[RMDB]
RNA sequence: GGGAACGACUCGAGUAGAGUCGAAAACAGGUUUUGCUGCUUCAUGCGGUGGCUUGGCCAGGAUUGUACUUGCUUUCUCCAGCCCAUUGAGGGGAGGGUCGGUGAACAGGGUUAUGACAAUGAGGCACACUUCUACGUUCUUCGGAACGUAGAAGUGAAAAGAAACAACAACAACAAC
Reactivity to 2A3 in 0.01 (KOAc 150mM, MgCl2 10mM, bicine 150mM(pH8.5), 24C), signal-to-noise 3, nucleotides 027 to 126: c010a010g020g050u040u070u170u130g040c020u010g020c000u060u110c060a130u180g010c030g030g040u070g000g000c000u060u110g060g000c010c040a030g040g020a070u040u080g070u070a110c000u080u090g050c010u080u060u010c030u000c030c010a030g000c000c000c020a080u080u130g050a100g030g010g000g040a120g010g010g000u080c070g010g030u070g010a030a020c000a030g000g000g070u130u110a110u120g030a020c020a020a030u120g010a080g040g000c040a000
Reactivity to DMS in 0.01 (KOAc 150mM, MgCl2 10mM, bicine 150mM(pH8.5), 24C), signal-to-noise 2, nucleotides 027 to 126: c100a070g010g000u000u000u000u000g030c040u000g020c050u010u000c130a100u030g020c080g040g030u010g020g000c040u000u000g010g050c050c030a080g020g000a130u010u020g020u000a070c070u010u000g020c040u000u000u010c040u000c010c030a080g020c010c020c070a110u000u010g000a150g000g010g000g000a120g000g010g000u000c060g010g010u000g000a050a080c100a070g000g000g020u000u010a050u020g010a080c110a050a030u000g010a130g010g000c100a280
This 177-nucleotide RNA was probed chemically with 2A3 and DMS. 2A3 adducts were read by reverse transcription with SuperScript II with manganese. Source: RMDB library OK2TRN, as collected in RNAgym. For DMS the reverse transcriptase was MarathonRT. The DMS profile rests on 2,105 reads.